RNA sequence: GGGAACGACUCGAGUAGAGUCGAAAAACGCGGAGUACGCUCCGCGACAACACUUCUUUCGACCCGCUAACCGAGACCUAUGGGUCGUUAAAUUAAGUCUCUAUCUUACUCACAUAACAUCGCACAAAAAACGUGGUUCGGUUCGCCGAACCACGAAUCUUUCAGCUUACUUCGGUAAGCUGAAAGAAAAAGAAACAACAACAACAAC
Reactivity to 2A3 in 0.01 (KOAc 150mM, MgCl2 10mM, bicine 150mM(pH8.5), 24C), signal-to-noise 1, nucleotides 027 to 156: a000c020g010c020g010g000a030g010u040a060c180g010c070u000c010c000g000c010g040a020c030a070a000c020a020c000u100u100c060u140u260u190c000g000a000c000c000c020g000c210u260a010a000c060c020g010a000g000a010c000c000u030a030u220g000g000g000u000c000g040u030u060a000a000a060u020u100a020a000g000u000c000u000c020u010a150u070c060u070u150a100c040u100c060a060c030a090u120a140a110c060a130u250c130g070c150a040c070a040a030a000a110a110a020c050g000u010g030g000u000u000c000g000g040u090u020c130g020c040c030g010a010a010c010c000a000c000g000a000a000
This 207-nucleotide RNA was probed chemically with 2A3. The RNA was probed in 150 mM KOAc, 10 mM MgCl2 and 150 mM bicine (pH 8.5) at 24 C. For 2A3, 501 sequencing reads were counted.